[RMDB]
RNA sequence: GGGAACGACUCGAGUAGAGUCGAAAAGGUACUUUAUGUAUUUCAUGGUAGAUCUCUCUGUUCACAGCACCUAAUUUUCUAGUUAAAAAUAAAUUAUGAACAGCAAAGAAAGACAUGAAGCUAGAUAAUACCAAUAAGUAUUCGUACUUAUUGGUAUAAAAGAAACAACAACAACAAC
Reactivity to DMS in 0.01 (KOAc 150mM, MgCl2 10mM, bicine 150mM(pH8.5), 24C), signal-to-noise 7, nucleotides 027 to 126: g010g000u000a040c020u000u000u010a030u010g010u000a040u010u000u000c010a070u010g000g010u020a100g010a120u020c040u000c050u000c010u000g010u000u010c000a030c130a050g010c110a060c130c060u010a040a050u020u010u010u020c060u020a100g000u030u030a020a040a040a060a090u020a040a020a070u010u010a100u000g000a020a020c010a030g000c150a040a090a060g000a020a050a080g010a050c000a010u000g000a020a030g010c060u010a090g000a090u010a050
Reactivity to 2A3 in 0.01 (KOAc 150mM, MgCl2 10mM, bicine 150mM(pH8.5), 24C), signal-to-noise 9, nucleotides 027 to 126: g060g010u060a050c020u060u080u050a050u130g040u030a100u020u040u030c030a030u040g090g020u160a110g040a300u030c030u000c010u000c000u060g010u000u010c020a030c020a090g050c030a090c050c030u050a090a130u030u070u070u060c030u040a070g070u150u130a090a070a020a030a020u160a060a080a050u180u110a090u090g010a010a000c000a000g010c040a040a060a060g020a020a030a000g040a010c000a000u010g010a010a000g010c020u020a010g020a080u090a100